Conditions: 150 mM KOAc, 10 mM MgCl2 and 150 mM bicine (pH 8.5), 24 C. Structure probing data (2A3 and DMS) for a 170-nucleotide construct. For 2A3 the reverse transcriptase was SuperScript II with manganese. The data come from the RNA Mapping Database (RMDB), library 15KLIB. For DMS, 31,706 sequencing reads were counted. The 2A3 profile rests on 21,837 reads.
[RMDB]
RNA sequence: GGGAACGACUCGAGUAGAGUCGAAAACAGUUGAUGAAGCGUUCCCUCUCGAUGAAGCAGAAGAUGUUACUGAAUCUGUGCAAGAAGAAGCACAACCAGUAGAAGUACCUGUUGAAGAUAUUGCGCAUACCUCUAGAGUUCGCUCUAGAGAAAAGAAACAACAACAACAAC
Reactivity to 2A3 in 0.01 (KOAc 150mM, MgCl2 10mM, bicine 150mM(pH8.5), 24C), signal-to-noise 9, nucleotides 027 to 129: c040a040g060u110u070g170a170u080g060a120a010g030c020g020u020u010c000c010c000u000c000u000c020g050a060u050g120a140a020g000c010a000g000a100a010g060a080u130g060u130u030a000c010u030g040a050a080u050c080u030g020u000g000c020a040a040g070a090a020g060a060a020g120c010a000c000a010a030c030c000a000g020u000a020g030a120a020g030u080a080c010c010u020g010u040u040g020a000a000g010a040u060a060u120u150g020c080g000c030a030u090a160c010
Reactivity to DMS in 0.01 (KOAc 150mM, MgCl2 10mM, bicine 150mM(pH8.5), 24C), signal-to-noise 7, nucleotides 027 to 129: c050a120g020u090u030g010a130u030g020a080a060g000c030g020u000u000c000c000c000u000c050u030c070g040a100u030g000a060a030g020c040a030g000a080a050g000a000u000g000u040u010a050c010u030g010a080a080u000c120u020g000u030g000c050a050a090g050a090a080g070a110a120g040c030a010c040a020a070c120c030a040g030u000a030g000a050a090g020u030a020c040c020u030g040u030u020g020a010a090g030a080u040a040u030u040g020c020g010c090a100u000a100c150